Annotation
The data come from the RNA Mapping Database (RMDB), library M2PK50. Structure probing data (2A3 and DMS) for a 177-nucleotide construct. The 2A3 profile rests on 1,170 reads. The DMS profile rests on 898 reads.

[RMDB]
RNA sequence: GGGAACGACUCGAGUAGAGUCGAAAAGCGUCCUGGUUCGCCAGGACGCAAAUAAAUGGUAGACUGAGACCGUCUAACUCAGAUAACGAGAAAUAGACGGAAAAACUGACUUGUUCGCAAGUCAGAAGUUUAAUUUCCACUUCGGUGGAAAUUAAACAAAAGAAACAACAACAACAAC
Reactivity to 2A3 in 0.01 (KOAc 150mM, MgCl2 10mM, bicine 150mM(pH8.5), 24C), signal-to-noise 1, nucleotides 027 to 126: g020c000g010u000c000c010u020g000g010u040u030c170g050c060c030a020g000g060a010c010g000c010a010a000a000u020a000a040a020u100g010g040u090a030g030a080c070u060g110a000g050a120c000c020g000u010c020u030a220a200c010u000c000a020g030a300u180a160a010c080g020a000g030a030a150a040u060a000g030a020c000g000g090a000a130a000a000a000c000u020g000a000c000u000u010g030u070u050c120g010c110a000a000g000u000c000a000g010a010a010
Reactivity to DMS in 0.01 (KOAc 150mM, MgCl2 10mM, bicine 150mM(pH8.5), 24C), signal-to-noise 1, nucleotides 027 to 126: g010c010g030u010c000c010u020g010g020u000u020c220g030c000c000a020g000g000a020c010g000c000a010a040a020u020a090a050a100u000g020g000u000a030g000a140c090u010g000a210g010a200c010c030g020u010c000u000a010a050c000u000c000a100g000a090u040a030a160c150g000a030g000a030a040a090u000a000g010a010c000g000g000a040a060a050a050a130c000u000g000a020c000u000u000g000u000u030c210g010c030a020a000g010u000c000a010g000a050a050